[RMDB]
RNA sequence: GGGAACGACUCGAGUAGAGUCGAAAAGCUCUGAGUGACAGAUCGAACAACAAAGAGAGAUCGAAAAUCUUAGGGGAGAGAACGAAUCUGUCGUCUUCUCUAGGACAUUGUCGAUCAGAUGUCCAAAGACCAUUCAUUGGUUCGCCAGUGAAUGGUCAAAAGAAACAACAACAACAAC
Reactivity to 2A3 in 0.01 (KOAc 150mM, MgCl2 10mM, bicine 150mM(pH8.5), 24C), signal-to-noise 9, nucleotides 027 to 126: g020c010u000c000u010g040a030g020u080g010a000c010a020g030a030u030c030g030a060a040c030a050a020c030a030a290a000g110a010g010a000g000a020u010c020g010a030a030a020a040u000c000u000u000a000g010g000g020g000a000g000a000g030a070a030c030g020a080a120u150c100u170g110u040c040g090u000c000u000u000c000u000c000u000a000g000g010a010c020a090u060u110g050u010c010g010a010u010c000a000g030a050u100g030u000c010c000a040a030a020
Reactivity to DMS in 0.01 (KOAc 150mM, MgCl2 10mM, bicine 150mM(pH8.5), 24C), signal-to-noise 8, nucleotides 027 to 126: g000c050u000c000u010g000a060g000u020g010a030c020a060g010a040u010c020g000a300a150c050a090a080c300a080a140a110g010a080g000a300g000a030u000c000g000a150a080a090a240u010c000u000u000a010g000g000g010g000a000g000a100g010a090a060c050g000a070a150u040c190u040g000u000c030g010u000c000u000u000c000u000c000u000a010g000g000a020c110a090u010u010g000u000c000g000a030u000c000a030g010a060u020g000u020c000c020a090a160a130
Conditions: 150 mM KOAc, 10 mM MgCl2 and 150 mM bicine (pH 8.5), 24 C.
Chemical mapping of a 177-nucleotide RNA with 2A3 and DMS.
It was measured as part of the RMDB library OK1LIB.
For 2A3 the reverse transcriptase was SuperScript II with manganese.
DMS adducts were read by reverse transcription with MarathonRT.